Structure probing data (DMS) for a 177-nucleotide construct. Source: RMDB library OK2TST, as collected in RNAgym.
[RMDB]
RNA sequence: GGGAACGACUCGAGUAGAGUCGAAAAACACGGAAGCCCUGCAGUCACGCACUUCCCGUCUGACCUCGGCCACUCCUCCUCCUGUCUCCUGCCGAUCCAAUGCCCACCGCGGUGGACCUCCAUUACCAACGAUCGAGGGAUUCGUCCCUCGAUCGUUAAAAGAAACAACAACAACAAC
Reactivity to DMS in 0.01 (KOAc 150mM, MgCl2 10mM, bicine 150mM(pH8.5), 24C), signal-to-noise 1, nucleotides 027 to 126: a030c150a050c150g010g000a090a090g020c060c030c000u010g020c080a100g010u020c160a090c090g020c080a070c030u000u000c020c000c020g000u010c010u000g000a080c060c030u000c070g020g000c000c050a030c020u000c070c000u000c010c020u000c010c000u050g000u000c050u000c070c000u010g010c060c020g030a030u000c030c050a080a110u020g020c030c000c010a130c050c070g030c030g000g000u020g000g000a050c020c050u000c010c050a090u010u000a170c130c100